[RMDB]
RNA sequence: GGGAACGACUCGAGUAGAGUCGAAAAAGAGGAAGGGAAGGUGCGGCAGGCCUUCGACCUCGUGGCGGAGAUCACGGAGUUGCUCGAGGGGUUCUAUCCUUCCUCCGAGGGAGGAGAACUCGGAGAGAAAUUACGACUCUUUCGAGAGUCGUAAUUUAAAAGAAACAACAACAACAAC
Reactivity to 2A3 in 0.01 (KOAc 150mM, MgCl2 10mM, bicine 150mM(pH8.5), 24C), signal-to-noise 1, nucleotides 027 to 126: a000g090a060g090g000a080a080g090g050g050a040a020g040g000u120g100c040g070g010c020a020g020g070c000c010u060u040c010g020a040c000c000u000c010g020u030g000g010c040g040g120a090g010a110u030c000a000c030g020g000a070g040u070u090g000c010u010c000g000a020g000g030g000g000u000u000c010u020a100u070c000c000u010u030c010c000u020c030c060g000a200g020g020g020a020g020g000a020g000a010a010c000u000c000g020g000a020g010a010g000
Reactivity to DMS in 0.01 (KOAc 150mM, MgCl2 10mM, bicine 150mM(pH8.5), 24C), signal-to-noise 3, nucleotides 027 to 126: a110g010a090g020g010a080a070g000g010g000a040a030g010g010u010g030c060g010g000c080a030g000g020c040c020u000u000c030g000a070c020c020u000c040g020u010g020g010c060g010g000a140g010a070u000c040a050c070g000g010a080g010u010u000g020c020u000c010g010a300g000g020g000g000u000u000c010u000a130u010c020c000u000u000c020c010u010c150c120g010a160g010g010g000a030g010g010a060g010a010a050c010u000c000g000g000a260g010a110g010